[RMDB]
RNA sequence: GGGAACGACUCGAGUAGAGUCGAAAAGAAAGAAAGAAAAUUUCAUCAGAGAACACAAAAGAACAUUCUUAAAACUAAAUAGCUCUGCUAUGGGGGUGAUGGCCAGUCCUGGUGUCUGAGUGAUUAAACUAGAGGAUAGAUUCGUCUAUCCUCUAGUAAAAGAAACAACAACAACAAC
Reactivity to 2A3 in 0.01 (KOAc 150mM, MgCl2 10mM, bicine 150mM(pH8.5), 24C), signal-to-noise 3, nucleotides 027 to 126: g040a030a040a010g090a010a140a000g070a070a150a080a090u010u080u030c030a030u030c020a010g050a000g020a260a040c070a020c030a070a090a070a040g100a090a000c020a090u060u060c030u060u190a110a130a070a070c030u110a060a050a190u030a080g020c000u020c160u230g010c020u020a030u050g020g050g000g030g020u040g020a080u080g060g040c010c030a000g030u060c010c040u000g000g030u010g000u020c060u020g040a040g040u060g010a070u070u160a140a110
Reactivity to DMS in 0.01 (KOAc 150mM, MgCl2 10mM, bicine 150mM(pH8.5), 24C), signal-to-noise 5, nucleotides 027 to 126: g000a080a070a070g000a080a050a080g000a040a060a080a080u010u010u000c010a060u010c050a090g020a100g010a100a100c080a050c130a060a080a070a100g010a080a080c080a070u010u010c030u010u020a040a060a090a140c070u010a060a050a080u010a080g000c030u040c150u020g000c030u000a030u010g020g020g040g000g020u020g010a050u010g000g000c040c040a040g000u010c030c030u010g010g000u000g020u000c010u000g000a130g000u000g010a080u010u000a020a100